[RMDB]
RNA sequence: GGGAACGACUCGAGUAGAGUCGAAAACACGGAGCCGUCACGUGCAUCCCAGGGAGCGCGUGGUUCAGGACACGGACCUGAAUUGGCGGAACCGUCGGAGUGUCCGUGACCCACUUCGCGAGUGGACCGAGGAGCGUACCUUCGGGUGCGUUCUUCGAAAAGAAACAACAACAACAAC
Reactivity to DMS in 0.01 (KOAc 150mM, MgCl2 10mM, bicine 150mM(pH8.5), 24C), signal-to-noise 9, nucleotides 027 to 126: c040a050c010g000g010a090g010c040c050g000u020c020a050c010g010u000g000c030a140u000c010c010c110a170g000g010g010a000g000c010g010c080g010u010g000g000u010u010c140a040g000g000a130c020a020c050g000g000a050c000c010u000g010a060a090u030u020g010g010c000g000g000a050a100c060c020g000u010c060g000g000a100g010u020g000u000c010c000g010u000g000a160c100c010c050a030c020u000u010c070g010c060g010a120g010u010g000g000a130c190
Reactivity to 2A3 in 0.01 (KOAc 150mM, MgCl2 10mM, bicine 150mM(pH8.5), 24C), signal-to-noise 9, nucleotides 027 to 126: c020a000c000g010g010a020g020c000c000g020u020c020a010c000g000u000g000c000a150u000c000c000c010a020g060g050g020a010g040c010g000c010g020u040g030g040u040u030c030a010g000g020a020c010a010c050g020g040a020c000c000u010g030a050a040u050u080g010g000c000g000g020a060a070c050c000g040u040c030g040g040a070g030u120g020u000c000c000g000u000g010a030c000c000c000a010c010u060u060c040g010c020g020a010g030u050g010g030a040c020
Notes
The record gives the reactivity of an RNA of 177 nucleotides to DMS and 2A3. For 2A3, 107,162 sequencing reads were counted. The data come from the RNA Mapping Database (RMDB), library OK1LIB. High 2A3 reactivity points to a flexible backbone, as in loops and unpaired stretches. Conditions: 150 mM KOAc, 10 mM MgCl2 and 150 mM bicine (pH 8.5), 24 C. The DMS profile rests on 93,353 reads. For DMS the reverse transcriptase was MarathonRT.